[RMDB]
Description
Source: RMDB library OK2TRN, as collected in RNAgym. This 177-nucleotide RNA was probed chemically with DMS and 2A3. Values cover nucleotides 27 to 126. For 2A3, 5,783 sequencing reads were counted.

RNA sequence: GGGAACGACUCGAGUAGAGUCGAAAACUGCCACCUCACCCACCGCAAUUCAUUUAGUAGCAGGCACAGGGGCAGCUCCGGCACGGCUUUCUCAGGCCUAUGCCGGAGCCUCGAGGGCUGGAGAGCGGAUCCUAGAUGAAUUCGUUCAUCUAGGAUCAAAAGAAACAACAACAACAAC
Reactivity to DMS in 0.01 (KOAc 150mM, MgCl2 10mM, bicine 150mM(pH8.5), 24C), signal-to-noise 6, nucleotides 027 to 126: c040u000g020c020c020a120c020c030u010c080a180c040c020c020a160c090c050g020c050a070a080u010u010c120a120u000u010u010a100g020u000a090g010c060a070g010g000c100a060c130a090g010g000g010g020c140a110g010c020u010c000c000g000g010c010a050c300g000g000c010u000u000u000c170u010c150a150g000g000c000c000u000a150u010g010c000c000g010g000a010g000c020c030u010c060g000a120g020g000g010c060u000g010g020a070g000a140g000c120g000
Reactivity to 2A3 in 0.01 (KOAc 150mM, MgCl2 10mM, bicine 150mM(pH8.5), 24C), signal-to-noise 4, nucleotides 027 to 126: c010u040g020c020c000a130c020c000u020c030a060c000c010c000a010c020c010g000c030a050a140u190u100c020a050u110u180u180a130g040u060a010g030c160a120g050g050c090a050c020a100g030g000g020g000c010a010g000c000u000c000c000g010g000c010a000c030g020g000c020u050u120u090c110u120c130a030g000g050c010c010u030a070u140g000c000c000g010g000a000g000c000c000u000c020g020a060g010g060g030c080u050g030g030a080g010a020g110c100g050